[RMDB]
RNA sequence: GGGAACGACUCGAGUAGAGUCGAAAAGAUAUGGAAGAUAGUAGGGAGCCGGUCGGAAACGACCGAGCAUCGAUCUACAUCUUCCUAAGUCAAAACGAUAGAACCGAGUUCGCUCGGUUCUAUCGAAGAGAUACUUAGUGUUCGCACUAAGUAUCUCAAAAGAAACAACAACAACAAC
Reactivity to 2A3 in 0.01 (KOAc 150mM, MgCl2 10mM, bicine 150mM(pH8.5), 24C), signal-to-noise 1, nucleotides 027 to 126: g030a030u070a030u140g000g000a010a000g000a010u110a180g010u020a010g010g080g000a000g000c010c010g000g000u000c010g020g000a090a020a030c000g000a000c010c010g000a030g000c010a070u170c020g030a050u010c000u000a010c000a010u000c000u010u000c000c010u000a120a000g030u010c020a020a020a080a130c020g000a000u000a000g000a000a000c010c000g000a000g020u080u140c290g050c160u010c000g000g000u000u010c000u000a000u000c000g000a000a000
Reactivity to DMS in 0.01 (KOAc 150mM, MgCl2 10mM, bicine 150mM(pH8.5), 24C), signal-to-noise 4, nucleotides 027 to 126: g000a040u010a300u010g000g020a020a000g010a020u000a120g020u010a010g000g000g000a040g020c000c000g010g010u000c000g000g000a090a090a170c010g010a010c000c000g000a070g030c000a190u000c100g010a080u020c000u000a000c000a030u000c000u000u010c010c000u000a010a080g010u000c040a060a050a120a210c020g000a010u000a000g000a010a000c000c000g010a010g010u000u020c210g020c010u000c000g010g000u000u000c000u000a000u000c010g000a050a080